[RMDB]
Structure probing data (DMS and 2A3) for a 207-nucleotide construct. The 2A3 profile rests on 2,888 reads.
RNA sequence: GGGAACGACUCGAGUAGAGUCGAAAAAUGGUUGGCUAAUGGGUCGUCAAGCCAAGGAAGAGUUAAGCCUGCAAAAAGACUGAUGGGCUUGCUAUACACUGUCCAUGGGGCUGUGAGGUUAAGGAACCAUGCAAACAACUACAGUACAAAGAGUUUAAUUAGUAAAUCGUUUCGACGAUUUACUAAUAAAAGAAACAACAACAACAAC
Reactivity to DMS in 0.01 (KOAc 150mM, MgCl2 10mM, bicine 150mM(pH8.5), 24C), signal-to-noise 2, nucleotides 027 to 156: a080u000g010g010u000u000g010g000c000u000a100a110u000g000g030g030u000c000g000u000c040a070a130g020c010c020a130a120g020g020a110a110g020a140g000u000u000a060a040g010c000c010u000g030c050a020a120a150a110a080g020a020c090u010g010a130u000g000g020g030c000u000u000g000c050u010a100u000a090c080a060c070u000g030u000c000c030a130u000g020g000g000g000c050u000g020u010g010a070g030g020u000u000a080a150g020g010a030a080c030c010a080u010g010c060a110a040a080c050a030a050c030u000a070c040a050g000u000a110c040a040a050a080g000a140g000u010u000u000a060
Reactivity to 2A3 in 0.01 (KOAc 150mM, MgCl2 10mM, bicine 150mM(pH8.5), 24C), signal-to-noise 4, nucleotides 027 to 156: a000u140g030g000u020u030g030g000c010u060a040a090u070g030g020g020u050c020g040u040c040a060a000g000c020c020a020a030g050g000a050a060g020a010g050u050u090a020a000g020c010c010u030g020c060a080a090a040a030a010g090a120c080u090g050a210u080g040g000g000c020u040u000g000c010u020a030u030a090c070a030c040u040g040u040c010c010a100u080g070g000g000g010c010u030g040u020g050a050g010g020u050u080a060a060g020g000a030a020c000c010a020u050g010c020a040a060a080c000a050a010c020u090a040c040a030g060u070a030c040a080a090a040g060a010g020u100u090u090a080